The record gives the reactivity of an RNA of 177 nucleotides to 2A3 and DMS. The 2A3 profile rests on 8,121 reads.

[RMDB]
RNA sequence: GGGAACGACUCGAGUAGAGUCGAAAAUGAUAUAAUCUGCAUCCGACAACGAUCACCAACUUCCACCUUGAUCGAUUGGUCGCAUAAUCCAUUAAAUUUGGAAGUAGUCGCUCAUGCUUAACAAUACGAUCAUUACCAUCUUCGGAUGGUAAUGAUCAAAAGAAACAACAACAACAAC
Reactivity to 2A3 in 0.01 (KOAc 150mM, MgCl2 10mM, bicine 150mM(pH8.5), 24C), signal-to-noise 7, nucleotides 027 to 126: u130g040a030u040a020u060a190a100u080c050u090g010c000a030u020c050c020g020a020c010a120a030c040g020a050u040c010a020c060c020a060a030c020u020u000c010c010a030c010c030u020u060g020a020u010c020g120a120u010u050g080g030u070c020g020c030a060u080a130a030u000c010c000a010u030u120a110a090a100u060u050u040g010g000a030a010g030u070a030g040u050c010g000c030u040c030a030u070g000c010u100u100a090a060c070a120a090u160a110c110
Reactivity to DMS in 0.01 (KOAc 150mM, MgCl2 10mM, bicine 150mM(pH8.5), 24C), signal-to-noise 3, nucleotides 027 to 126: u040g010a080u010a060u020a070a080u010c010u000g020c030a040u000c090c020g010a030c050a100a060c080g010a030u010c040a060c140c080a060a060c050u000u000c020c040a060c300c080u000u000g000a030u020c150g020a040u000u010g000g000u010c110g010c070a070u000a050a060u010c010c050a020u020u000a060a080a070u010u010u000g000g000a050a070g020u000a040g000u000c010g000c040u010c120a050u000g000c040u030u000a100a090c140a060a040u030a140c180